Structure probing data (2A3 and DMS) for a 177-nucleotide construct. The 2A3 profile rests on 11,048 reads.
RNA sequence: GGGAACGACUCGAGUAGAGUCGAAAACAUCCACUGCUACGGCAGUGGAUGAACGAGGUAGGUACGCCUACCUCGAAAGGUGGAUGUUGUCAUAAACAUUAAACGUCCAUGGUACGCCAUGGACGAACACCCUGAUUAAUUUCGAUUAAUCAGGGUGAAAAGAAACAACAACAACAAC
Reactivity to 2A3 in 0.01 (KOAc 150mM, MgCl2 10mM, bicine 150mM(pH8.5), 24C), signal-to-noise 5, nucleotides 027 to 126: c000a000u000c000c000a000c000u000g000c020u020a080c180g160g000c010a010g010u000g010g010a000u000g000a010a000c010g010a000g000g010u000a000g030g010u040a030c220g100c020c010u010a000c010c000u000c000g000a040a010a000g140g040u140g060g050a150u050g010u050u020g060u080c060a080u140a120a110a040c020a030u100u190a090a110a050c020g000u000c000c000a000u000g000g000u040a030c200g030c030c000a000u000g000g000a010c000g010a000a000
Reactivity to DMS in 0.01 (KOAc 150mM, MgCl2 10mM, bicine 150mM(pH8.5), 24C), signal-to-noise 7, nucleotides 027 to 126: c020a000u000c000c000a000c000u000g000c000u000a110c230g060g010c010a010g020u000g000g010a000u000g010a040a100c010g020a010g010g000u000a000g000g010u000a100c290g020c000c000u000a010c000c000u000c000g000a010a070a080g020g020u010g000g010a080u000g010u000u000g010u000c140a120u010a120a030a040c080a060u010u000a060a110a200c010g000u000c000c000a010u010g010g030u000a110c300g030c010c000a010u000g000g000a010c010g000a030a110

High 2A3 reactivity points to a flexible backbone, as in loops and unpaired stretches. The reactions ran in a buffer of 150 mM KOAc, 10 mM MgCl2 and 150 mM bicine (pH 8.5), at 24 C. Reactivities are given for positions 27 through 126.